[RMDB]
RNA sequence: GGGAACGACUCGAGUAGAGUCGAAAAGCGGUCGACCUGGUGUGGAAGGGGGAUCCUGUGAAGCACGGGCUUCAGUGUUCCACAAAGAGCACAACCCAAAAGAACAUCAAAAUGCCUAGGAUCCUCGCCGGAAUAGGACAUUCGUGUCCUAUUCCGGAAAAGAAACAACAACAACAAC
Reactivity to DMS in 0.01 (KOAc 150mM, MgCl2 10mM, bicine 150mM(pH8.5), 24C), signal-to-noise 2, nucleotides 027 to 126: g010c020g010g070u020c100g020a130c050c000u010g010g010u000g020u000g020g000a050a100g000g090g000g000g020a010u000c020c000u000g010u000g000a040a090g000c070a060c240g000g000g000c140u000u010c210a100g010u000g020u000u000c010c000a160c300a110a140a140g000a010g000c100a000c000a140a200c000c000c000a000a100a080a080g030a070a140c060a080u020c130a050a060a040a130u010g000c010c000u010a030g020g000a000u000c000c010u010c040g050
Reactivity to 2A3 in 0.01 (KOAc 150mM, MgCl2 10mM, bicine 150mM(pH8.5), 24C), signal-to-noise 3, nucleotides 027 to 126: g020c020g030g060u070c020g020a070c010c010u030g060g030u090g060u080g120g020a050a070g040g030g000g000g010a000u020c000c000u150g060u080g170a060a000g000c010a020c090g010g030g000c060u130u050c100a040g000u000g020u000u020c040c010a110c100a190a120a000g000a010g010c020a020c000a020a100c000c020c000a040a080a080a030g110a080a130c060a110u150c100a100a160a060a030u140g040c010c000u000a000g000g010a000u000c040c000u020c000g020
The data come from the RNA Mapping Database (RMDB), library OK1LIB.
This 177-nucleotide RNA was probed chemically with DMS and 2A3.
2A3 adducts were read by reverse transcription with SuperScript II with manganese.
Values cover nucleotides 27 to 126.
DMS adducts were read by reverse transcription with MarathonRT.
The RNA was probed in 150 mM KOAc, 10 mM MgCl2 and 150 mM bicine (pH 8.5) at 24 C.